[RMDB]
RNA sequence: GGGAACGACUCGAGUAGAGUCGAAAAGCAAUACGACCGCUCCAUAUCUGCCGAAUGAUGCCAAUGUAUGGUGCCUACUGUCCAACGUAACCGUUAAUCGCUGCCUUGGCGGCGAUUAACAAUCACAUCUUCUUCACUAGUUCGCUAGUGAAGAAGAAAAAGAAACAACAACAACAAC
Reactivity to DMS in 0.01 (KOAc 150mM, MgCl2 10mM, bicine 150mM(pH8.5), 24C), signal-to-noise 3, nucleotides 027 to 126: g000c110a060a090u000a090c080g010a090c080c060g010c050u000c020c010a040u000a050u000c020u000g010c080c020g000a100a060u010g010a100u010g010c010c040a040a110u010g020u000a050u010g010g010u010g000c030c020u010a080c090u000g010u000c030c050a090a130c160g000u000a070a120c190c100g000u000u000a000a000u000c000g010c000u000g010c000c040u020u010g050g010c000g010g010c000g010a020u000u000a010a000c000a080a090u010c130a050c200a130
Reactivity to 2A3 in 0.01 (KOAc 150mM, MgCl2 10mM, bicine 150mM(pH8.5), 24C), signal-to-noise 4, nucleotides 027 to 126: g010c020a040a070u060a140c050g040a040c030c030g030c020u000c000c000a010u030a020u070c020u050g020c010c000g080a090a090u120g080a040u100g050c020c040a110a050u120g050u140a100u080g100g030u040g030c000c010u040a090c020u070g030u030c010c010a040a010c080g050u040a060a030c040c020g000u000u010a000a000u010c000g000c000u010g000c020c000u080u190g150g000c000g000g000c000g010a000u000u000a000a000c000a000a010u030c020a020c020a090